[RMDB]
RNA sequence: GGGAACGACUCGAGUAGAGUCGAAAACACCGCCUUCGUCGCGGUGCGGACGGGACUGCCGAGCUCACCACCACGGCUGCUACCCGCUUUAUGAAGGACCUCUAUUUUACUAGUACUAAUGGUGUCGACCAUACGGGGUUUUCGAACCCCGUAUGGUAAAAGAAACAACAACAACAAC
Reactivity to 2A3 in 0.01 (KOAc 150mM, MgCl2 10mM, bicine 150mM(pH8.5), 24C), signal-to-noise 1, nucleotides 027 to 126: c000a000c000c020g010c010c000u280u280c110g200u130c070g020c020g000g000u010g000c020g010g020a020c000g000g010g090a050c020u040g020c040c000g040a020g040c020u070c060a000c020c020a040c020c000a020c030g000g000c020u010g050c070u130a240c000c020c000g000c000u080u230u070a220u160g110a060a030g060g030a030c000c050u120c000u060a200u050u230u050u110a060c110u070a040g040u040a030c050u080a010a120u060g020g000u050g080u050c030g040
Reactivity to DMS in 0.01 (KOAc 150mM, MgCl2 10mM, bicine 150mM(pH8.5), 24C), signal-to-noise 2, nucleotides 027 to 126: c010a040c000c000g000c000c020u020u010c260g000u010c250g010c000g020g000u000g020c030g040g030a100c100g030g010g000a140c010u010g000c010c020g000a100g000c040u010c130a080c140c040a150c140c050a060c030g000g010c020u000g010c120u000a090c060c000c010g010c070u010u000u000a060u010g010a030a080g000g000a090c060c020u000c050u010a050u000u000u030u000a110c090u010a090g020u000a070c130u010a060a060u000g020g010u000g000u000c080g010